[RMDB]
RNA sequence: GGGAACGACUCGAGUAGAGUCGAAAACGAGGUGGACUGCGCCGCGGCGGCGCGCAGCGCCUCCUCGAUCGGCAACGCGGCCUGGACCAGGGUCGCCAGUUGCCGGGUCACCAAUGCCAGGUCGCGAAUUAUGACGUGGGUUCGCCCACGUCAUAAUAAAAGAAACAACAACAACAAC
Reactivity to DMS in 0.01 (KOAc 150mM, MgCl2 10mM, bicine 150mM(pH8.5), 24C), signal-to-noise 2, nucleotides 027 to 126: c010g000a010g000g020u000g000g010a170c000u000g000c000g000c230c150g030c030g030g020c130g000g020c080g020c000g070c040a010g000c130g000c010c010u010c010c000u000c000g010a100u010c030g020g000c000a050a090c020g020c000g030g000c000c000u000g020g010a130c180c180a240g000g010g000u000c180g000c000c050a040g010u000u010g000c040c070g000g000g010u000c160a080c000c040a050a120u010g000c060c050a010g000g010u000c000g010c080g000a170
Background
The record gives the reactivity of an RNA of 177 nucleotides to DMS. Conditions: 150 mM KOAc, 10 mM MgCl2 and 150 mM bicine (pH 8.5), 24 C. It was measured as part of the RMDB library OK2TRN. For DMS, 1,398 sequencing reads were counted.